Chemical mapping of a 177-nucleotide RNA with DMS and 2A3.
For DMS the reverse transcriptase was MarathonRT.
Source: RMDB library TTRDES, as collected in RNAgym.
RNA sequence: GGGAACGACUCGAGUAGAGUCGAAAAGAUAUGGAGUCGGAGGACAUGCGUCCUGGUCGGAAACGACCAGGGACGCAACAGCCUUUCGACUCCUAAGUCAAACGACCUUCGCUUCGGCGAAGGUCGAUCUCACUAAGAGGUUCGCCUCUUAGUGAGAAAAAGAAACAACAACAACAAC
Reactivity to DMS in 0.01 (KOAc 150mM, MgCl2 10mM, bicine 150mM(pH8.5), 24C), signal-to-noise 2, nucleotides 027 to 126: g000a020u000a050u010g000g000a030g010u000c010g000g000a000g000g010a030c010a300u020g020c000g020u000c000c000u000g000g020u000c000g040g010a020a010a070c010g020a010c000c000a000g010g030g010a020c020g050c000a030a020c220a160g010c000c010u000u000u000c000g000a020c000u000c000c000u000a000a040g000u010c000a120a150a260c030g010a010c000c000u000u000c010g020c010u000u020c300g040g020c000g000a010a020g000g000u000c020g000a020
Reactivity to 2A3 in 0.01 (KOAc 150mM, MgCl2 10mM, bicine 150mM(pH8.5), 24C), signal-to-noise 1, nucleotides 027 to 126: g000a000u030a010u040g000g000a000g010u020c020g030g000a020g030g000a040c140a200u300g000c010g000u020c000c000u010g000g010u020c000g000g010a020a000a000c000g000a010c000c000a010g010g030g000a020c010g010c010a000a020c040a020g000c000c030u030u050u080c000g000a000c010u010c000c010u010a000a010g000u000c010a060a050a100c030g000a000c000c000u000u030c010g010c020u090u120c300g150g000c010g000a000a010g040g000u000c010g000a000